[RMDB]
Source: RMDB library M2PK50, as collected in RNAgym. Chemical mapping of a 177-nucleotide RNA with 2A3 and DMS. The reactions ran in a buffer of 150 mM KOAc, 10 mM MgCl2 and 150 mM bicine (pH 8.5), at 24 C. 2A3 adducts were read by reverse transcription with SuperScript II with manganese.
RNA sequence: GGGAACGACUCGAGUAGAGUCGAAAAACACGGAACUUCGGUUCCGUGUAUAGGGACGAAAUAACACGAUAGCGCUUGUCGCCCGAGCAAAAAGGGGGAAAAACUGCAUCCUCUUCGGAGGAUGCAAUGUUAAACAGUAUUUCGAUACUGUUUAACAAAAAGAAACAACAACAACAAC
Reactivity to 2A3 in 0.01 (KOAc 150mM, MgCl2 10mM, bicine 150mM(pH8.5), 24C), signal-to-noise 8, nucleotides 027 to 126: a000c000a000c000g000g000a010a000c010u060u090c210g070g000u000u000c000c000g000u000g000u000a010u030a000g020g010g020a040c050g100a090a080a080u180a130a030c070a010c110g140a100u090a070g090c060g010c070u040u050g050u070c010g020c010c010c010g030a020g020c060a010a050a070a060a060g010g000g000g000g050a030a060a020a020a010c050u030g000c000a000u000c000c000u030c000u030u070c200g080g000a000g000g000a000u000g000c000a000a000
Reactivity to DMS in 0.01 (KOAc 150mM, MgCl2 10mM, bicine 150mM(pH8.5), 24C), signal-to-noise 9, nucleotides 027 to 126: a030c000a010c000g000g000a010a000c000u000u010c190g030g010u000u000c000c000g010u000g010u000a010u000a070g000g010g010a070c050g010a070a070a070u010a070a070c080a070c080g000a100u010a090g010c080g000c050u000u000g010u000c040g010c010c020c010g010a100g020c140a030a040a040a090a100g010g000g000g010g010a100a050a050a070a090c200u000g000c000a010u000c000c000u000c000u000u010c170g020g000a010g000g000a000u000g000c000a000a000